[RMDB]
RNA sequence: GGGAACGACUCGAGUAGAGUCGAAAAUGCCUUGGUUGAAGAAUAUGAAGCCACUUACCGGCUGACAGAUGCGGUGCAACUGAAUGGUAAUAAACGCGAAAACCUACUGGAUGCCGCGCGUAUUGAACUAACUUUUUCGAUUCGUCGAAAAAGUUAGAAAAGAAACAACAACAACAAC
Reactivity to 2A3 in 0.01 (KOAc 150mM, MgCl2 10mM, bicine 150mM(pH8.5), 24C), signal-to-noise 2, nucleotides 027 to 126: u070g040c010c000u040u100g020g020u030u080g070a120a030g040a070a040u110a010u250g000a010a010g020c000c000a020c010u010u090a090c000c070g030g000c040u000g000a010c010a040g130a030u120g010c060g030g060u060g030c010a050a030c050u040g060a170a070u190g020g020u020a030a030u140a120a170a030c030g000c020g080a030a040a090a030c000c000u080a090c060u060g070g010a070u050g020c030c010g000c000g000c020g020u030a120u050u100g020a040a010
Reactivity to DMS in 0.01 (KOAc 150mM, MgCl2 10mM, bicine 150mM(pH8.5), 24C), signal-to-noise 4, nucleotides 027 to 126: u010g010c010c000u010u000g020g020u000u000g020a160a110g000a110a100u020a010u010g010a300a060g000c010c010a050c130u020u000a050c120c050g000g000c040u010g020a180c100a020g000a100u010g030c040g000g000u000g010c050a040a090c030u000g010a090a060u020g010g010u000a020a040u000a040a090a070c070g000c050g000a090a100a050a080c030c020u010a150c210u000g020g010a090u000g010c300c020g010c050g010c110g020u000a060u010u000g010a110a170

The data come from the RNA Mapping Database (RMDB), library OK2TST. This 177-nucleotide RNA was probed chemically with 2A3 and DMS. The 2A3 profile rests on 979 reads.